Description: Structure probing data (DMS and 2A3) for a 207-nucleotide construct.
[RMDB]
RNA sequence: GGGAACGACUCGAGUAGAGUCGAAAAACGAUAACGAGGCGCUCGCUAUUGCUGCGUAACUGACGGCCUGACGGUCUGACGUUACAAAGCCAAAGCGCGGUUGGACCCCACCGGGCAACAGAAGGGGAAAGGCGACCCCGUUUCGACGGGGUCGCAACCUAUACUGGAUGUUCGCAUCCAGUAUAGGAAAAGAAACAACAACAACAAC
Reactivity to DMS in 0.01 (KOAc 150mM, MgCl2 10mM, bicine 150mM(pH8.5), 24C), signal-to-noise 1, nucleotides 027 to 156: a080c000g020a150u020a130a070c040g060a030g050g000c030g040c040u000c000g080c010u000a160u010u010g040c000u000g000c300g020u050a040a020c010u000g030a300c300g010g050c000c010u000g060a100c260g080g040u000c000u000g030a300c200g000u000u000a090c000a010a280a070g000c000c050a050a150a040g000c010g060c000g000g040u000u010g000g000a160c010c010c000c020a090c070c030g030g000g000c050a090a160c050a100g020a140a090g000g000g040g000a080a050a090g060g040c000g000a040c010c010c000c020g000u010u010u000c180g040a080c000g010g020g040g040u000c000g020c000a000a000
Reactivity to 2A3 in 0.01 (KOAc 150mM, MgCl2 10mM, bicine 150mM(pH8.5), 24C), signal-to-noise 1, nucleotides 027 to 156: a000c010g010a040u070a120a020c040g000a030g100g010c070g060c080u110c040g010c010u100a140u170u200g000c010u010g000c000g000u010a000a000c000u000g010a000c000g000g030c020c020u150g160a070c100g000g000u000c010u000g000a010c010g000u000u000a000c000a000a020a010g000c020c000a070a090a000g010c010g010c010g000g000u030u090g180g020a030c010c050c000c000a000c000c020g040g240g000c010a030a010c000a040g010a020a010g030g000g010g000a100a050a010g120g000c010g000a000c000c000c000c000g000u020u050u090c130g070a040c000g000g000g000g000u000c000g000c000a000a000
For 2A3, 1,455 sequencing reads were counted.
The data come from the RNA Mapping Database (RMDB), library M2RFPK.
DMS adducts were read by reverse transcription with MarathonRT.
As a SHAPE reagent, 2A3 marks flexible, mostly unpaired nucleotides at the ribose 2'-OH.
The reactions ran in a buffer of 150 mM KOAc, 10 mM MgCl2 and 150 mM bicine (pH 8.5), at 24 C.